[RMDB]
RNA sequence: GGGAACGACUCGAGUAGAGUCGAAAAUAGGAUUUAGGGUUCUCGGCAAGAACGUCAGAAGUGUCUGCAAAUGCGGUGCGAAGAGGAUAGGAUGUGUGCUCGCGAGCGGUGUGAGUGUCGAGAGGAACGUUACUCUGUCGUUCGCGACAGAGUAACGAAAAGAAACAACAACAACAAC
Reactivity to 2A3 in 0.01 (KOAc 150mM, MgCl2 10mM, bicine 150mM(pH8.5), 24C), signal-to-noise 5, nucleotides 027 to 126: u130a030g050g040a050u080u110u110a050g020g040g030u040u010c010u000c000g000g000c010a030a070g050a150a010c040g050u070c090a020g020a130a010g130u060g030u090c030u030g000c010a050a130a150u140g000c020g030g000u040g030c020g020a060a030g020a040g060g040a050u070a050g060g040a100u070g050u010g020u050g060c010u020c050g000c030g020a010g020c050g010g030u050g000u010g060a060g010u030g030u020c020g010a010g010a020g100g040a090a000
Reactivity to DMS in 0.01 (KOAc 150mM, MgCl2 10mM, bicine 150mM(pH8.5), 24C), signal-to-noise 4, nucleotides 027 to 126: u020a100g000g000a120u000u030u020a080g010g000g020u030u010c010u010c010g020g000c050a080a050g000a070a040c060g000u020c040a080g010a090a110g020u020g000u020c010u000g040c070a080a070a130u030g010c010g020g020u010g010c030g020a090a100g000a060g000g000a080u010a120g010g030a060u000g000u020g000u010g010c070u000c040g010c010g020a070g020c050g010g010u010g010u000g000a050g020u010g000u000c030g000a120g030a110g000g000a060a100